[RMDB]
RNA sequence: GGGAACGACUCGAGUAGAGUCGAAAAACAGAUUUACAUCCAGACCUUUCUCCUAAACUAAUUAUAAGGAUGAUCAGAGACUUUUGCCAGCUACACUAAAAGAAAAUGGCCUUCUUGACUGUGAAGAGCUGCCUGCAGAGAGCUGUACAGAAGCACAUCACGUAAAUCGUUUCGACGAUUUACGUGAAAAAGAAACAACAACAACAAC
Reactivity to 2A3 in 0.01 (KOAc 150mM, MgCl2 10mM, bicine 150mM(pH8.5), 24C), signal-to-noise 3, nucleotides 027 to 156: a000c000a000g090a030u120u130u180a070c040a030u020c020c010a020g070a140c050c040u070u110u090c070u080c010c020u080a090a050a150c090u060a130a110u300u130a190u070a290a050g010g000a020u060g020a060u100c040a010g070a010g090a250c020u020u070u120u060g040c010c010a020g030c050u080a040c060a020c050u050a070a000a010a080g090a020a180a070a110u150g050g000c030c000u030u020c000u020u110g090a100c050u070g000u030g060a040a010g020a030g120c000u030g030c030c010u030g090c010a040g090a010g000a020g040c000u000g020u010a060c030a020g020a010a000g000c030a010c000a050
Reactivity to DMS in 0.01 (KOAc 150mM, MgCl2 10mM, bicine 150mM(pH8.5), 24C), signal-to-noise 1, nucleotides 027 to 156: a070c010a110g000a080u010u000u010a090c060a090u030c030c030a120g000a080c090c020u010u020u000c030u000c030c020u000a050a110a280c090u000a090a110u000u030a160u020a080a160g010g020a090u000g000a070u000c040a080g010a210g000a080c070u030u000u000u030g040c090c060a040g060c040u000a060c060a090c030u010a050a000a080a050g000a070a010a070a040u030g020g020c030c010u000u000c040u010u000g020a170c050u000g000u010g000a150a090g040a090g000c000u000g010c050c010u000g050c080a030g000a230g010a030g020c010u000g050u020a040c090a090g000a000a030g000c030a070c020a090
Source: RMDB library OK3TST, as collected in RNAgym.
An RNA of 207 nucleotides, treated with 2A3 and DMS and read out base by base.
The reactions ran in a buffer of 150 mM KOAc, 10 mM MgCl2 and 150 mM bicine (pH 8.5), at 24 C.
Reactivities are given for positions 27 through 156.
For 2A3 the reverse transcriptase was SuperScript II with manganese.
For 2A3, 1,108 sequencing reads were counted.
For DMS, 1,733 sequencing reads were counted.